[RMDB]
RNA sequence: GGGAACGACUCGAGUAGAGUCGAAAAGGCGAGAGUCGCCGCACUCCGUUAACGAUAACUUGGCCCAUUUGUUUCGCCCACAUUUGUGCGCGCCAUAAUAUCAGUUAACAUUGCCAAGUCGAGUGUAUCACCUAUCGCCAUUCGUGGCGAUAGGUGAAAAAGAAACAACAACAACAAC
Reactivity to 2A3 in 0.01 (KOAc 150mM, MgCl2 10mM, bicine 150mM(pH8.5), 24C), signal-to-noise 2, nucleotides 027 to 126: g020g000c050g000a160g020a040g300u160c010g040c020c000g000c000a010c000u010c050c000g000u000u030a030a000c010g020a010u000a010a030c080u040u010g020g010c000c010c060a060u040u020u020g130u000u080u090c060g020c020c080c000a010c020a020u080u060u080g120u150g040c130g000c060g000c060c000a000u020a120a030u030a040u000c030a010g010u010u000a000a010c020a060u110u190g040c000c020a090a030g110u220c090g030a000g020u010g010u040a080
Reactivity to DMS in 0.01 (KOAc 150mM, MgCl2 10mM, bicine 150mM(pH8.5), 24C), signal-to-noise 2, nucleotides 027 to 126: g040g000c010g030a200g030a160g010u000c000g010c010c010g000c000a040c000u020c000c160g000u000u000a010a000c010g000a020u000a040a100c290u020u010g010g000c000c040c000a100u000u020u010g000u000u000u000c130g030c090c040c180a090c030a060u000u000u010g000u000g050c210g000c100g010c000c030a010u000a080a090u000a000u000c030a080g000u000u010a000a030c000a150u000u000g010c120c100a100a060g000u020c110g000a020g010u000g010u010a120
Conditions: 150 mM KOAc, 10 mM MgCl2 and 150 mM bicine (pH 8.5), 24 C. The record gives the reactivity of an RNA of 177 nucleotides to 2A3 and DMS. For DMS the reverse transcriptase was MarathonRT. For 2A3 the reverse transcriptase was SuperScript II with manganese. It was measured as part of the RMDB library OK2TST. Reactivities are given for positions 27 through 126.